[RMDB]
RNA sequence: GGGAACGACUCGAGUAGAGUCGAAAAUGCAGUCAGAUCAACCACUUCUGGAUCUGGAAGUGGACAAUCAUCAACGGGAUCGGGGGCUGGUGGAUCAGGAACGACCGCUUCUGGAAGUGGGUCAGGACCACUAGGUAUCAUUCGUGAUACCUAGUGGAAAAGAAACAACAACAACAAC
Reactivity to DMS in 0.01 (KOAc 150mM, MgCl2 10mM, bicine 150mM(pH8.5), 24C), signal-to-noise 6, nucleotides 027 to 126: u010g030c070a070g010u010c070a110g010a050u010c080a130a270c020c000a010c010u010u000c000u000g020g020a130u020c170u010g000g010a020a030g010u000g000g000a040c200a070a060u000c060a070u000c100a090a090c110g000g000g000a070u000c050g000g010g000g010g000c080u000g000g010u010g000g010a070u010c050a070g010g000a100a100c130g010a070c030c030g010c030u000u000c090u000g020g010a050a040g010u000g020g020g000u010c030a090g000g010a240
Reactivity to 2A3 in 0.01 (KOAc 150mM, MgCl2 10mM, bicine 150mM(pH8.5), 24C), signal-to-noise 5, nucleotides 027 to 126: u130g010c030a020g070u060c020a020g020a080u040c030a040a090c020c000a010c000u020u000c010u050g300g070a300u060c080u190g030g000a010a000g000u020g000g010a040c050a010a090u110c050a010u040c020a040a080c040g090g000g000a040u070c030g020g000g000g020g040c050u050g030g030u060g040g020a060u060c050a060g020g050a060a030c040g030a030c030c010g010c030u050u030c060u120g110g080a040a040g040u080g050g020g020u030c030a010g000g060a030